[RMDB]
RNA sequence: GGGAACGACUCGAGUAGAGUCGAAAACUCUGAAGGCUGGGCCCUGGUAAUUGAAAACACUCAGCUGUGCUAAUUGGAUUAGGAGGGAAGCAGGCUGGAGCAGGGGACGGUGCCUUCCAAGGCAUCCUCCUUCACGUAUGUUCGCAUACGUGAAGGAAAAAGAAACAACAACAACAAC
Reactivity to DMS in 0.01 (KOAc 150mM, MgCl2 10mM, bicine 150mM(pH8.5), 24C), signal-to-noise 2, nucleotides 027 to 126: c040u000c030u000g020a110a050g010g010c030u000g000g000g010c020c050c030u010g030g010u010a090a070u000u010g010a110a170a080a120c090a110c010u000c040a030g000c050u000g000u000g010c010u000a080a100u000u010g000g020a180u000u000a040g010g020a070g000g000g000a150a140g010c040a160g010g010c000u000g000g020a090g020c050a090g020g000g000g010a060c160g020g010u000g000c000c000u000u030c080c220a140a060g010g000c030a050u000c010c110
Reactivity to 2A3 in 0.01 (KOAc 150mM, MgCl2 10mM, bicine 150mM(pH8.5), 24C), signal-to-noise 1, nucleotides 027 to 126: c020u000c070u040g060a070a000g060g060c050u060g050g060g040c030c050c010u030g030g080u180a130a150u130u100g070a110a000a000a000c020a010c020u030c030a030g010c050u050g000u060g170c000u030a180a230u120u070g070g040a110u230u070a140g040g020a070g020g020g040a020a000g000c030a010g030g000c040u020g060g020a030g040c050a010g000g000g020g000a010c040g000g070u040g020c010c010u040u000c030c020a060a000g020g000c000a060u070c000c000

Chemical mapping of a 177-nucleotide RNA with DMS and 2A3.
Values cover nucleotides 27 to 126.
For 2A3 the reverse transcriptase was SuperScript II with manganese.
Conditions: 150 mM KOAc, 10 mM MgCl2 and 150 mM bicine (pH 8.5), 24 C.
In probing experiments dimethyl sulfate is read out at A N1 and C N3, which are open when not base-paired.
The data come from the RNA Mapping Database (RMDB), library OK2TRN.
The DMS profile rests on 1,328 reads.
For DMS the reverse transcriptase was MarathonRT.